[RMDB]
This 177-nucleotide RNA was probed chemically with 2A3 and DMS. The reactions ran in a buffer of 150 mM KOAc, 10 mM MgCl2 and 150 mM bicine (pH 8.5), at 24 C. For DMS, 14,448 sequencing reads were counted.
RNA sequence: GGGAACGACUCGAGUAGAGUCGAAAAGCUCAGUGUGUGUCGCCCCGUCGUCUAGUGCUGGUUGUAGGGCUGGGGCGUCAGCAUCCAGGUCUGACGGGACGGGCAGUAUCUCGCCAUCAACGAUAAACGUAUGUGAUCUAUUCGUAGAUCACAUACGAAAAGAAACAACAACAACAAC
Reactivity to 2A3 in 0.01 (KOAc 150mM, MgCl2 10mM, bicine 150mM(pH8.5), 24C), signal-to-noise 4, nucleotides 027 to 126: g040c020u020c070a060g020u040g000u030g010u020g040u150c010g010c000c000c000c000g030u050c010g020u000c050u050a040g050u030g130c020u030g060g080u120u140g060u110a100g000g060g000c050u060g040g010g000g030c010g000u000c000a010g000c000a020u060c040c070a020g020g080u010c050u100g020a020c000g020g000g030a020c020g000g010g000c000a000g010u040a040u080c050u010c030g030c020c010a090u090c040a050a060c050g050a040u110a120a110a010
Reactivity to DMS in 0.01 (KOAc 150mM, MgCl2 10mM, bicine 150mM(pH8.5), 24C), signal-to-noise 6, nucleotides 027 to 126: g000c030u000c040a110g020u000g010u000g020u000g000u000c030g010c030c010c010c020g010u000c030g010u000c030u010a060g020u000g000c030u000g000g000u010u000g030u010a090g000g000g020c030u000g010g000g010g000c040g010u000c030a050g000c030a040u010c060c100a060g010g010u000c030u010g010a050c040g000g000g010a050c060g010g000g010c030a060g000u000a080u000c040u010c040g010c040c030a060u000c100a040a060c100g000a100u010a040a060a140